[RMDB]
RNA sequence: GGGAACGACUCGAGUAGAGUCGAAAAUUAUGUUCCUCUUUUGUGAGGAAAAUAAGGGAAACAGCUUUUUUCACAUUUUCCUACUUUAAGAAAUGGGCAAAGAUAGUUCAACAGCUAUAGUGGUAAGAAUGUAAGUGAUUUUCGAAUCACUUACAUUAAAAGAAACAACAACAACAAC
Reactivity to 2A3 in 0.01 (KOAc 150mM, MgCl2 10mM, bicine 150mM(pH8.5), 24C), signal-to-noise 6, nucleotides 027 to 126: u080u030a100u150g030u020u040c000c000u010c000u020u120u080u060g120u070g100a020g000g000a010a020a000a010u060a030a060g050g000g000a000a030a030c040a050g180c050u080u070u030u020u050u070c020a040c010a060u030u020u010u010c010c000u010a080c020u060u100u050a050a030g020a030a110a040u150g010g010g000c010a040a060a020g090a060u070a030g030u060u070c040a080a050c010a070g000c010u040a030u050a130g070u060g080g020u030a060a040g070
Reactivity to DMS in 0.01 (KOAc 150mM, MgCl2 10mM, bicine 150mM(pH8.5), 24C), signal-to-noise 9, nucleotides 027 to 126: u010u010a050u010g010u010u000c010c010u000c020u000u010u010u010g010u010g010a030g010g000a010a010a030a010u000a110a120g010g000g000a050a040a060c270a160g010c110u000u000u000u000u000u000c020a070c090a070u000u000u000u000c000c000u000a060c060u000u000u000a050a060g010a030a070a090u000g010g010g010c040a050a070a100g010a070u000a030g010u000u000c060a060a070c160a060g010c040u000a040u000a060g020u010g000g010u010a060a110g000